[RMDB]
RNA sequence: GGGAACGACUCGAGUAGAGUCGAAAAACGAAACUCUACGCCGUGGUUGGCGGCGCGAAGCUCAGAAGCACGCUGAGAAAAGCCGGCGCAGAUAUGAAAGAACUUUCUGCCGUCAACCGCGACGUAGUAUGAUUAUCUCAUUCGUGAGAUAAUCAUAAAAAGAAACAACAACAACAAC
Reactivity to 2A3 in 0.01 (KOAc 150mM, MgCl2 10mM, bicine 150mM(pH8.5), 24C), signal-to-noise 7, nucleotides 027 to 126: a000c060g040a100a020a020c060u020c000u030a000c000g000c020c000g000u010g000g000u000u000g000g000c000g010g000c010g010c060g010a000a000g010c000u000c020a040g020a160a010g060c030a010c050g000c000u020g020a040g110a240a250a030a020g150c070c030g040g000c040g000c030a050g060a140u190a060u200g090a120a110a090g020a020a010c000u030u090u000c020u070g000c000c000g000u000c000a010a000c000c000g010c000g000a000c000g000u000a000g000
Reactivity to DMS in 0.01 (KOAc 150mM, MgCl2 10mM, bicine 150mM(pH8.5), 24C), signal-to-noise 9, nucleotides 027 to 126: a110c090g010a120a090a100c150u010c000u000a010c000g020c000c010g030u000g010g010u000u000g010g000c000g000g010c010g010c300g000a010a020g010c030u000c010a030g000a250a140g000c060a090c040g000c010u000g010a160g000a140a080a080a170g010c270c020g010g010c020g020c040a090g010a090u000a060u000g010a080a150a080g000a020a030c020u000u000u000c090u010g010c000c000g010u000c000a000a010c010c010g010c010g000a000c000g000u000a010g000
Structure probing data (2A3 and DMS) for a 177-nucleotide construct. It was measured as part of the RMDB library OK2TRN. Conditions: 150 mM KOAc, 10 mM MgCl2 and 150 mM bicine (pH 8.5), 24 C. For 2A3 the reverse transcriptase was SuperScript II with manganese. DMS adducts were read by reverse transcription with MarathonRT.